Annotation:
The record gives the reactivity of an RNA of 207 nucleotides to DMS and 2A3. For 2A3, 3,614 sequencing reads were counted. Conditions: 150 mM KOAc, 10 mM MgCl2 and 150 mM bicine (pH 8.5), 24 C. It was measured as part of the RMDB library M2RFPK. DMS adducts were read by reverse transcription with MarathonRT.

RNA sequence: GGGAACGACUCGAGUAGAGUCGAAAAAGCCGAUCUACGGACCGGCAAAACGUUCAUCUCGUUUUACGGGCCGCAUUAAGAUUGAAGCCAAGGAACGGGGACUUCAGACUACGACUACGGUCGUAGAUUACGCCUCCGAGUUUCGACUCGGAGGCAACAUACAUAGUGAGUUCGCUCACUAUGUAUGAAAAGAAACAACAACAACAAC
Reactivity to DMS in 0.01 (KOAc 150mM, MgCl2 10mM, bicine 150mM(pH8.5), 24C), signal-to-noise 2, nucleotides 027 to 156: a180g020c000c010g010a050u000c000u000a050c130g030g000a010c000c000g030g000c140a010a000a020a020c030g000u000u000c230a160u010c210u010c010g020u000u000u000u000a060c000g000g000g000c000c000g000c020a090u010u000a070a130g000a250u000u020g010a040a040g010c000c030a030a100g010g010a070a150c090g020g000g020g020a080c010u000u000c030a090g010a230c010u000a010c000g000a050c000u000a130c280g040g000u000c040g020u000a010g000a110u000u000a040c070g030c000c000u010c010c000g010a020g000u000u000u000c170g020a080c000u010c000g030g020a010g020g000c050a000a010
Reactivity to 2A3 in 0.01 (KOAc 150mM, MgCl2 10mM, bicine 150mM(pH8.5), 24C), signal-to-noise 5, nucleotides 027 to 156: a030g070c050c010g020a060u010c010u060a020c050g020g010a010c000c010g020g090c100a010a010a000a010c060g040u170u130c120a250u070c120u020c030g000u010u000u020u050a010c010g000g030g000c010c000g000c030a070u090u130a060a020g040a090u020u060g030a020a020g020c000c020a050a070g130g020a080a110c070g000g010g000g090a040c010u060u060c110a040g030a100c010u010a000c010g010a000c000u040a030c240g090g000u000c000g000u000a000g000a000u060u090a040c070g000c000c000u000c000c000g000a010g000u070u120u120c190g080a030c000u000c000g000g000a010g000g000c000a000a000